[RMDB]
RNA sequence: GGGAACGACUCGAGUAGAGUCGAAAAAGGCUUUUUUCCAUUCAACAAUAUGUCUUGGAGAGCUACAUCUAUCUAUACCUACACCAUCCUUUCUUGGAACAGUUGUGUGCUACUCCAUGGCACACAUGGACUUUGCUUAUUUACCCAGGCCCCUACAGUAAAUAGGGGUAUUCGUACCCCUAUUUACAAAAGAAACAACAACAACAAC
Reactivity to DMS in 0.01 (KOAc 150mM, MgCl2 10mM, bicine 150mM(pH8.5), 24C), signal-to-noise 3, nucleotides 027 to 156: a090g030g030c030u010u010u000u010u010u000c010c030a110u000u000c030a070a090c050a100a130u000a120u000g010u000c000u000u010g000g020a050g010a110g020c030u000a040c040a070u000c040u000a080u020c050u000a100u010a060c050c010u000a100c060a140c020c010a070u000c030c060u000u010u000c050u000u000g010g010a090a110c080a100g010u010u000g030u000g010u000g010c010u000a080c030u010c090c070a110u010g030g010c020a020c020a040c020a030u000g020g010a050c170u000u000u010g010c020u000u000a140u000u000u000a090c000c020c000a180g010g010c020c000c010c030u010a030c110a260
Reactivity to 2A3 in 0.01 (KOAc 150mM, MgCl2 10mM, bicine 150mM(pH8.5), 24C), signal-to-noise 7, nucleotides 027 to 156: a000g070g010c040u110u060u020u020u060u030c010c000a030u070u110c050a080a090c050a180a130u120a060u300g020u000c020u020u020g000g000a020g000a000g010c020u050a030c020a040u040c040u110a060u040c030u070a090u080a180c030c030u070a050c050a050c070c040a090u090c020c010u110u200u170c070u090u120g030g010a060a040c030a120g020u050u050g000u030g000u030g030c000u040a230c030u010c020c010a020u040g000g000c000a010c000a000c000a040u010g010g000a010c010u040u080u030g010c010u060u050a050u090u120u080a120c000c010c050a020g090g030c040c030c030c010u110a070c060a030
Chemical mapping of a 207-nucleotide RNA with DMS and 2A3. For 2A3, 5,305 sequencing reads were counted. For DMS, 6,445 sequencing reads were counted. For DMS the reverse transcriptase was MarathonRT. The reactions ran in a buffer of 150 mM KOAc, 10 mM MgCl2 and 150 mM bicine (pH 8.5), at 24 C.